[RMDB]
RNA sequence: GGGAACGACUCGAGUAGAGUCGAAAAGAGCUGAAGUACAGCAAGAACGACGUUAUCCUUGGCAAAGCGUCGAAGAUAAGCGUGCCGACUGCCAAGGAUUAACGGCACGCGAGGCGAAGACGCCAGAAUGCCUCCAUUAGUUCGCUAAUGGAGGCAUAAAAGAAACAACAACAACAAC
Reactivity to DMS in 0.01 (KOAc 150mM, MgCl2 10mM, bicine 150mM(pH8.5), 24C), signal-to-noise 3, nucleotides 027 to 126: g010a160g000c020u000g010a150a130g060u040a180c040a000g010c010a250a150g010a140a090c040g000a090c100g020u010u050a070u010c010c000u010u030g010g020c020a120a130a110g000c040g060u000c030g030a100a110g010a150u050a070a170g000c010g010u000g030c000c050g050a150c080u030g000c000c030a020a030g000g000a040u000u020a030a070c080g000g020c010a020c000g030c000g000a030g010g030c020g020a160a110g000a140c030g000c030c050a090g000a080
Reactivity to 2A3 in 0.01 (KOAc 150mM, MgCl2 10mM, bicine 150mM(pH8.5), 24C), signal-to-noise 4, nucleotides 027 to 126: g090a020g000c000u020g020a200a000g180u220a120c000a000g020c010a020a050g040a110a040c030g040a020c000g010u050u060a020u060c010c000u000u010g030g000c090a190a110a120g030c040g010u040c040g050a050a010g080a080u300a130a010g000c020g010u010g000c000c000g120a200c070u080g000c010c000a000a000g010g020a000u010u050a010a010c020g000g000c010a000c000g020c020g020a100g010g000c010g040a080a100g120a130c050g000c020c010a010g090a070
An RNA of 177 nucleotides, treated with DMS and 2A3 and read out base by base.
The DMS profile rests on 4,871 reads.
Source: RMDB library OK1LIB, as collected in RNAgym.
The RNA was probed in 150 mM KOAc, 10 mM MgCl2 and 150 mM bicine (pH 8.5) at 24 C.
The 2A3 profile rests on 3,421 reads.